This 177-nucleotide RNA was probed chemically with DMS and 2A3. The reactions ran in a buffer of 150 mM KOAc, 10 mM MgCl2 and 150 mM bicine (pH 8.5), at 24 C. For 2A3, 1,447 sequencing reads were counted. Source: RMDB library OK2TRN, as collected in RNAgym. As a SHAPE reagent, 2A3 marks flexible, mostly unpaired nucleotides at the ribose 2'-OH.
[RMDB]
RNA sequence: GGGAACGACUCGAGUAGAGUCGAAAACGCUUUCGCUGGAGAUCGGCCUGUCGCUUGCGGUAUUCGGAAUCUUGCACGCCCUCGCUCAAGCCUUCGUCACUCCAAACGUUUCGGCGAGAAGCAGGCCUCAUGUCAAUUCCUUCGGGAAUUGACAUGAAAAAGAAACAACAACAACAAC
Reactivity to DMS in 0.01 (KOAc 150mM, MgCl2 10mM, bicine 150mM(pH8.5), 24C), signal-to-noise 2, nucleotides 027 to 126: c100g010c040u000u000u000c050g040c020u000g010g010a050g000a060u010c110g000g020c030c010u010g000u000c180g030c030u000u010g000c080g010g010u000a110u020u010c110g030g030a110a090u010c070u000u010g000c070a070c090g010c040c070c030u000c060g010c030u000c060a080a160g000c020c030u000u010c070g030u000c080a070c060u000c060c080a130a080a040c180g000u010u000u000c060g000g020c020g000a100g040a040a060g010c020a070g000g000c020c060
Reactivity to 2A3 in 0.01 (KOAc 150mM, MgCl2 10mM, bicine 150mM(pH8.5), 24C), signal-to-noise 1, nucleotides 027 to 126: c030g010c000u000u090u060c050g000c020u020g070g000a090g010a110u090c030g010g100c010c010u040g010u060c060g000c050u020u070g010c020g000g000u110a110u010u170c000g080g040a050a090u000c030u160u150g010c020a000c060g000c020c010c000u040c040g050c010u000c040a020a010g030c030c010u060u060c000g120u050c000a030c080u020c000c060a120a120a010c070g010u000u050u060c060g010g010c020g040a100g060a020a020g000c020a020g000g070c000c000